[RMDB]
RNA sequence: GGGAACGACUCGAGUAGAGUCGAAAAGAUCAAUUAUGAUUGCAAUGUAAUAUGUCAAGGCAGACAUAUCUAGCUGUCGCCUUAGCUAGAGAUAGCCGCUUUAUUGCUUUCAUAAGACCGGCAAGAAGAUAGUAUGAUGAUUCGUCAUCAUACUAUCAAAAGAAACAACAACAACAAC
Reactivity to DMS in 0.01 (KOAc 150mM, MgCl2 10mM, bicine 150mM(pH8.5), 24C), signal-to-noise 9, nucleotides 027 to 126: g010a110u010c100a100a150u000u000a010u000g000a010u000u000g010c000a010a010u000g000u000a050a060u000a040u010g010u010c110a050a090g010g010c040a140g010a030c030a030u000a060u000c060u000a040g010c070u000g010u000c160g010c170c110u010u000a030g000c010u000a000g000a060g000a100u000a060g010c010c080g010c080u000u000u000a020u000u000g000c000u000u000u000c000a010u000a010a020g010a150c030c020g010g010c160a090a110g010a120a120
Reactivity to 2A3 in 0.01 (KOAc 150mM, MgCl2 10mM, bicine 150mM(pH8.5), 24C), signal-to-noise 9, nucleotides 027 to 126: g070a110u170c060a030a100u030u010a010u020g010a000u000u020g000c000a010a010u040g040u170a040a050u070a050u170g070u070c060a060a070g040g000c030a020g010a050c010a020u070a040u020c030u030a010g040c020u010g100u140c070g120c040c030u040u060a010g000c000u010a000g000a010g010a050u200a090g030c060c110g040c040u030u050u030a010u010u010g000c000u000u010u010c010a000u000a020a010g040a050c030c000g060g060c080a070a030g080a080a010

Record summary: The data come from the RNA Mapping Database (RMDB), library OK2TRN. Chemical mapping of a 177-nucleotide RNA with DMS and 2A3. For DMS, 33,719 sequencing reads were counted. Conditions: 150 mM KOAc, 10 mM MgCl2 and 150 mM bicine (pH 8.5), 24 C.